[RMDB]
RNA sequence: GGGAACGACUCGAGUAGAGUCGAAAAUCGGUGGGACGAAUGUUCUUAUUUCACCAGAACCAUGGGGUGGGUUUAGGGAAGCGGGCAUCUUGUCGCAGACAGGCUGCUGUCACGCGUUCGAUAAAUCCUGAUGACACGUAUUCGUACGUGUCAUCAGAAAAGAAACAACAACAACAAC
Reactivity to DMS in 0.01 (KOAc 150mM, MgCl2 10mM, bicine 150mM(pH8.5), 24C), signal-to-noise 1, nucleotides 027 to 126: u000c050g000g020u050g000g000g030a010c180g000a070a030u020g000u020u000c030u070u000a060u000u040u000c050a080c080c120a100g000a040a050c070c130a040u000g000g000g000g000u080g000g000g000u060u010u010a090g020g030g020a260a130g000c060g000g040g000c060a000u000c060u000u000g000u000c000g020c030a030g020a010c050a050g000g010c070u000g000c020u000g040u000c030a080c020g050c070g000u030u030c030g000a050u020a080a030a130u070c080
Reactivity to 2A3 in 0.01 (KOAc 150mM, MgCl2 10mM, bicine 150mM(pH8.5), 24C), signal-to-noise 4, nucleotides 027 to 126: u110c060g010g010u080g000g030g010a040c060g060a090a100u090g020u080u040c020u120u070a180u080u060u130c040a030c030c000a000g000a030a030c080c000a010u040g020g000g060g140u290g000g030g050u110u080u240a090g030g000g020a010a020g060c110g020g000g040c010a050u000c060u090u140g000u040c020g000c060a030g000a040c000a000g040g060c100u300g050c000u030g110u030c010a050c100g040c030g040u060u040c000g010a000u080a120a160a020u070c000